[RMDB]
Structure probing data (2A3 and DMS) for a 207-nucleotide construct.
As a SHAPE reagent, 2A3 marks flexible, mostly unpaired nucleotides at the ribose 2'-OH.
It was measured as part of the RMDB library M2RFPK.
RNA sequence: GGGAACGACUCGAGUAGAGUCGAAAAACAAUAUGCCCAGGUAGCCCAGACCUUCAAGGCUACGGUGCGUUGCGACGCACGGUCUGAUUCUUCACAACGACGUUCACCGCGUCUUCUUCCAUCCCCCUCCAGCGCACGAAGUUCGCUUCGUGCGCAACCAUUAUUGUUAGUUCGCUAACAAUAAUGGAAAAGAAACAACAACAACAAC
Reactivity to 2A3 in 0.01 (KOAc 150mM, MgCl2 10mM, bicine 150mM(pH8.5), 24C), signal-to-noise 4, nucleotides 027 to 156: a000c100a030a070u130a080u290g000c010c000c010a030g050g000u000a000g000c000c040c130a020g000a010c000c000u010u010c010a000a010g000g000c000u010a000c000g000g010u010g000c000g010u020u060g060c200g110a010c000g020c000a000c010g000g010u000c000u010g030a040u110u060c080u120u120c060a080c040a210a060c090g030a000c010g080u160u200c080a030c140c030g010c020g010u010c000u040u020c010u100u030c040c040a110u100c020c000c000c000c000u010c010c010a000g000c000g000c000a000c000g000a000a010g000u020u050c070g040c070u000u000c000g010u000g000c000g000c000a000a000
Reactivity to DMS in 0.01 (KOAc 150mM, MgCl2 10mM, bicine 150mM(pH8.5), 24C), signal-to-noise 2, nucleotides 027 to 156: a100c070a110a100u020a120u000g060c020c050c030a090g050g000u000a030g000c010c000c130a070g000a070c020c000u010u000c070a070a250g000g010c010u000a020c040g000g020u010g000c010g010u040u020g010c250g000a180c020g040c020a050c000g000g030u000c020u020g010a190u000u000c090u000u000c050a130c100a070a090c040g000a080c020g010u010u000c070a090c060c000g020c040g010u000c040u000u000c040u000u010c020c020a170u000c000c010c020c010c000u000c030c010a110g020c000g010c000a020c010g030a040a020g020u000u000c260g020c020u000u000c020g020u000g020c000g020c000a010a040

For DMS the reverse transcriptase was MarathonRT. For 2A3 the reverse transcriptase was SuperScript II with manganese.